About this RNA: Structure probing data (2A3) for a 177-nucleotide construct. 2A3 adducts were read by reverse transcription with SuperScript II with manganese. Conditions: 150 mM KOAc, 10 mM MgCl2 and 150 mM bicine (pH 8.5), 24 C. It was measured as part of the RMDB library OK1LIB.

RNA sequence: GGGAACGACUCGAGUAGAGUCGAAAAAACCACCUCAUAAACCAAAUGGUGCAAUCCAUUAAUAGAAACUGAGCCUAUAUACAUGCCAGGCCUUUUCCUAACAGCCUCAAGUCCUUUUAAGACCUGACCGGGGAGAGACAUUCGUGUCUCUCCCCGGAAAAGAAACAACAACAACAAC
Reactivity to 2A3 in 0.01 (KOAc 150mM, MgCl2 10mM, bicine 150mM(pH8.5), 24C), signal-to-noise 1, nucleotides 027 to 126: a010a000c070c070a060c010c000u020c000a160u110a180a000a000c040c010a020a100a000u010g000g000u040g050c110a000a110u190c000c000a020u040u090a100a150u000a060g060a000a050a000c110u010g020a000g000c040c020u170a160u140a040u060a120c080a000u120g120c060c000a020g050g000c000c000u050u110u000u000c000c000u020a060a040c020a030g040c000c000u010c000a200a000g020u030c050c000u030u290u080u170a080a040g000a050c000c010u000g010a060